Structure probing data (DMS) for a 177-nucleotide construct. It was measured as part of the RMDB library TTRDES. The DMS profile rests on 940 reads. The reactions ran in a buffer of 150 mM KOAc, 10 mM MgCl2 and 150 mM bicine (pH 8.5), at 24 C.

RNA sequence: GGGAACGACUCGAGUAGAGUCGAAAAGAUAUGGAACGGUGGACAGCAACAGCCGUGACCUCGGAAACGAGGUACGGACAUGCUGUUCACCGUUCCUAAGUCAAAGAACCAGCUUCGGCUGGUUCAACCGGUAAGAUGACUUCGGUCAUCUUACCGGAAAAGAAACAACAACAACAAC
Reactivity to DMS in 0.01 (KOAc 150mM, MgCl2 10mM, bicine 150mM(pH8.5), 24C), signal-to-noise 1, nucleotides 027 to 126: g010a100u000a300u020g020g000a000a010c010g000g030u000g000g020a000c000a030g020c020a030a030c300a190g000c000c000g010u010g000a060c000c010u000c000g000g000a110a090a220c020g020a000g010g030u000a000c000g000g000a010c060a110u000g000c000u000g000u000u000c000a000c000c000g030u010u000c000c000u010a010a060g000u020c030a090a080a190g000a000a000c000c000a030g000c010u010u010c300g010g050c000u020g000g000u000u000c000a010a090